[RMDB]
Chemical mapping of a 177-nucleotide RNA with DMS and 2A3.

RNA sequence: GGGAACGACUCGAGUAGAGUCGAAAAGAUAUGGAGCUUAUUUGAGCACUGCUACAAAGAGCACGAUGAAAGCAAUCGGAAACGAUUGCUGGAGUGCUCCAGUGCAAUGAUGAUAAGCUCCUAAGUCGAAUUAGAAAAACUUCGGUUUUUCUAAUUCAAAAGAAACAACAACAACAAC
Reactivity to DMS in 0.01 (KOAc 150mM, MgCl2 10mM, bicine 150mM(pH8.5), 24C), signal-to-noise 2, nucleotides 027 to 126: g000a110u000a290u010g000g000a010g020c020u000u000a010u000u010u010g010a100g000c010a000c010u000g000c300u030a180c190a060a170a210g000a020g010c000a000c010g000a160u010g000a220a100a010g010c000a000a000u010c000g010g000a070a150a120c000g000a000u000u000g000c000u000g010g000a020g010u000g000c020u000c000c000a070g020u000g010c000a120a090u010g020a090u000g000a020u000a000a000g010c000u000c000c000u000a000a090g000u040c090
Reactivity to 2A3 in 0.01 (KOAc 150mM, MgCl2 10mM, bicine 150mM(pH8.5), 24C), signal-to-noise 2, nucleotides 027 to 126: g040a020u170a050u300g000g000a010g030c000u000u010a000u000u110u060g010a020g040c030a010c020u020g080c120u300a230c210a170a220a050g000a000g000c000a000c060g300a300u100g010a030a000a000g000c010a000a000u000c000g030g000a140a040a000c020g010a020u030u000g000c020u000g000g020a020g020u000g010c000u000c020c010a000g000u010g000c040a040a300u090g020a020u050g010a000u010a010a020g010c000u030c010c000u000a030a010g060u060c090
About this RNA: 2A3 is a SHAPE reagent: it acylates the 2'-hydroxyl of flexible nucleotides of all four kinds.